[RMDB]
RNA sequence: GGGAACGACUCGAGUAGAGUCGAAAAACCUUAUGCAGUAGUAAAGUAGUCCCUCUGGUCCAUUGUAAUGUCGACCAAGAACAGUUUCAGGUGGGGAGUUUGGCUGGGGCGGCACAUUUGUUAAAAGCUAAUACAGAACGUUCGCGUUCUGUAUUAGAAAAGAAACAACAACAACAAC
Reactivity to DMS in 0.01 (KOAc 150mM, MgCl2 10mM, bicine 150mM(pH8.5), 24C), signal-to-noise 3, nucleotides 027 to 126: a060c020c010u000u020a040u010g010c050a100g010u010a080g000u010a040a050a080g010u000a080g010u000c020c010c010u010c060u010g000g010u000c010c030a070u000u010g030u010a100a060u010g010u000c160g010a020c010c020a030a090g010a050a080c140a120g020u000u010u000c080a080g030g020u000g010g010g000g000a090g010u000u010u010g000g010c060u000g000g010g020g030c070g010g000c060a040c110a070u000u000u000g010u010u010a040a060a070a120g000
Reactivity to 2A3 in 0.01 (KOAc 150mM, MgCl2 10mM, bicine 150mM(pH8.5), 24C), signal-to-noise 1, nucleotides 027 to 126: a020c020c000u000u030a140u100g010c030a020g020u110a000g030u030a050a030a030g010u050a030g020u080c070c010c000u020c030u040g000g020u000c020c000a030u000u110g100u250a150a060u020g030u050c070g000a030c010c000a010a000g020a010a010c020a040g040u020u070u120c040a040g010g020u030g030g080g010g000a070g030u040u190u080g030g030c060u020g030g000g080g020c000g040g030c020a000c000a040u060u060u080g090u040u030a050a110a000a010g010
The record gives the reactivity of an RNA of 177 nucleotides to DMS and 2A3.
DMS adducts were read by reverse transcription with MarathonRT.
For 2A3 the reverse transcriptase was SuperScript II with manganese.
The reactions ran in a buffer of 150 mM KOAc, 10 mM MgCl2 and 150 mM bicine (pH 8.5), at 24 C.
The DMS profile rests on 2,732 reads.